[RMDB]
RNA sequence: GGGAACGACUCGAGUAGAGUCGAAAAGUGAAGACGACAAUCCUUUUGUAUCACUGUGCUCGGUAGGGAUGCUUGAAGAGCAUGAAAAGGGACUUUCGGAGGCCUCAAAUUCUUCUGUCUCGUUAGACUUUGUGCUGCGAUUCGUCGCAGCACAAAGAAAAGAAACAACAACAACAAC
Reactivity to 2A3 in 0.01 (KOAc 150mM, MgCl2 10mM, bicine 150mM(pH8.5), 24C), signal-to-noise 2, nucleotides 027 to 126: g060u070g000a040a020g040a030c020g010a000c040a000a130u110c000c000u000u150u000u000g060u020a100u140c020a030c110u130g040u010g070c010u000c000g000g050u050a020g050g030g100a070u060g140c060u050u010g050a070a010g010a030g040c000a000u040g000a080a070a000a000g000g040g000a050c030u080u130u100c130g090g000a020g030g080c020c000u030c010a030a080a160u130u030c000u050u000c040u060g040u040c000u000c040g060u070u140a030g010a040
Reactivity to DMS in 0.01 (KOAc 150mM, MgCl2 10mM, bicine 150mM(pH8.5), 24C), signal-to-noise 1, nucleotides 027 to 126: g000u010g000a090a010g020a090c070g000a020c100a070a000u010c070c010u000u000u000u010g000u010a060u020c090a020c030u020g020u010g000c020u000c000g000g000u020a040g000g010g000a060u010g000c030u000u000g010a090a010g000a090g020c080a090u020g000a190a010a100a060g080g020g020a020c080u000u030u030c080g050g000a210g000g000c050c020u010c040a010a050a060u000u000c040u010u010c040u000g000u000c030u000c000g010u130u000a090g000a180

The record gives the reactivity of an RNA of 177 nucleotides to 2A3 and DMS. Values are in units of 0.01, from 0 to 300, in steps of 10. DMS adducts were read by reverse transcription with MarathonRT. The reactions ran in a buffer of 150 mM KOAc, 10 mM MgCl2 and 150 mM bicine (pH 8.5), at 24 C. In probing experiments dimethyl sulfate is read out at A N1 and C N3, which are open when not base-paired.